An RNA of 177 nucleotides, treated with DMS and read out base by base.

RNA sequence: GGGAACGACUCGAGUAGAGUCGAAAAAUGGCACCAGUGGGCCGGCACUGCUGGAGGACCCAGUGCAGCCUCCGCAGCUGCUGGCCCAGGUGGUAAGCCUCUCACUGCCCUGGGCUGGCAGCGCCAGACUCUGCGCAUGAUUCGUCAUGCGCAGAGUAAAAGAAACAACAACAACAAC
Reactivity to DMS in 0.01 (KOAc 150mM, MgCl2 10mM, bicine 150mM(pH8.5), 24C), signal-to-noise 3, nucleotides 027 to 126: a060u010g010g030c030a090c030c010a060g020u010g000g000g000c020c000g010g010c010a040c000u000g010c020u020g050g010a020g000g020a090c070c050c100a120g000u000g000c130a270g000c000c000u000c010c010g020c010a010g010c150u000g000c000u000g010g010c000c000c000a010g000g010u000g010g010u000a050a100g010c010c000u010c090u000c040a080c070u010g000c030c000c030u000g000g000g000c120u010g010g010c020a040g010c070g020c040c030a120g000
Source: RMDB library OK2TST, as collected in RNAgym.